The data come from the RNA Mapping Database (RMDB), library M2RFPK. This 207-nucleotide RNA was probed chemically with 2A3 and DMS. For DMS the reverse transcriptase was MarathonRT. For 2A3 the reverse transcriptase was SuperScript II with manganese. The RNA was probed in 150 mM KOAc, 10 mM MgCl2 and 150 mM bicine (pH 8.5) at 24 C. For DMS, 6,119 sequencing reads were counted.
[RMDB]
RNA sequence: GGGAACGACUCGAGUAGAGUCGAAAAGCAAGUCGCAUCGCAAAACCGCGGCAAGUGGAGUUAGCGAGAGGAGGCUGGGUUUUGGCUUCCUAAAGCAAUCGGUCACCGAGAAGGUGUGGUCGUUACCUAGACAGUUUUCUGUUCGCAGAAAACUGAAGACACAUUACAGAUUCGUCUGUAAUGUGUCAAAAGAAACAACAACAACAAC
Reactivity to 2A3 in 0.01 (KOAc 150mM, MgCl2 10mM, bicine 150mM(pH8.5), 24C), signal-to-noise 9, nucleotides 027 to 156: g060c050a060a030g050u070c030g040c060a050u030c020g020c050a040a060a030a050c020c020g020c020g090g050c230a150a040g020u040g030g030a070g030u070u110a020g030c010g010a040g010a040g080g030a020g020g000c020u060g110g070g100u060u080u130u210g030g000c010u020u040c000c010u060a060a040a010g020c010a030a090u050c020g020g020u040c010a010c020c040g030a050g060a210a060g070g010u080g010u050g030g010u010c010g020u020u040a180c000c010u040a060g040a100c000a000g000u010u000u000u000c000u000g040u030u080c200g010c070a000g000a000a000a000a000c000u000g000a020a000
Reactivity to DMS in 0.01 (KOAc 150mM, MgCl2 10mM, bicine 150mM(pH8.5), 24C), signal-to-noise 2, nucleotides 027 to 156: g050c030a100a120g010u020c000g030c020a170u010c030g000c040a080a070a120a140c050c050g000c000g000g000c110a050a070g000u020g010g000a160g010u000u000a100g000c060g000a080g020a090g010g000a050g020g000c020u010g030g030g010u010u000u000u000g000g030c010u010u010c040c030u000a000a040a120g020c030a050a070u000c030g000g020u000c020a130c000c020g010a160g000a160a140g020g020u000g020u000g010g010u000c010g020u000u010a020c040c020u000a160g000a210c010a010g020u000u000u000u000c000u000g010u000u010c240g000c020a030g010a010a010a010a020c010u010g010a020a090